[RMDB]
RNA sequence: GGGAACGACUCGAGUAGAGUCGAAAAUAUCAGAGUACUUGUUAUUGGGGCAUAAUGAGAGAGAUGUGGGGACAAGUGAUUGAGAUCAGACUGUGGCAGCUUUGAAUUCCUGGUUAAGGAAUUUGUGCUUUAUUACAUAGGUGGAUGGAGAGCCCUAGAUAGUAAUAUAUUUCGAUAUAUUACUAUCAAAAGAAACAACAACAACAAC
Reactivity to DMS in 0.01 (KOAc 150mM, MgCl2 10mM, bicine 150mM(pH8.5), 24C), signal-to-noise 2, nucleotides 027 to 156: u000a120u010c030a170g010a120g030u000a080c050u010u000g020u000u000a060u000u000g000g010g040g060c050a090u010a060a070u020g000a160g010a160g020a080g000a050u010g030u000g020g020g010g020a090c070a060a090g020u000g010a110u000u000g010a160g000a110u000c030a090g010a040c030u000g030u000g010g020c100a090g020c090u020u000u000g030a020a030u000u000c010c010u010g020g010u000u010a070a030g010g000a030a010u000u000u000g020u000g000c040u010u000u000a110u010u000a070c030a120u000a030g000g000u020g020g000a100u000g020g010a070g000a120g020c040c020c040u000a130
Reactivity to 2A3 in 0.01 (KOAc 150mM, MgCl2 10mM, bicine 150mM(pH8.5), 24C), signal-to-noise 4, nucleotides 027 to 156: u180a040u080c030a000g030a020g090u030a060c030u050u040g040u050u090a090u070u100g000g000g010g000c030a030u030a100a090u190g030a040g000a000g000a010g030a080u060g020u070g040g020g000g000a030c020a070a080g020u050g050a100u070u070g040a030g000a070u050c040a010g070a090c040u040g000u020g080g030c020a010g000c040u140u140u220g030a010a010u010u040c000c000u050g150g100u230u150a050a010g010g020a020a000u030u010u020g010u030g010c000u070u120u120a100u100u100a090c060a050u080a020g060g000u030g030g020a010u030g010g000a030g010a010g030c010c010c000u020a050
Source: RMDB library OK3TST, as collected in RNAgym. This 207-nucleotide RNA was probed chemically with DMS and 2A3. For DMS the reverse transcriptase was MarathonRT. For 2A3, 2,411 sequencing reads were counted.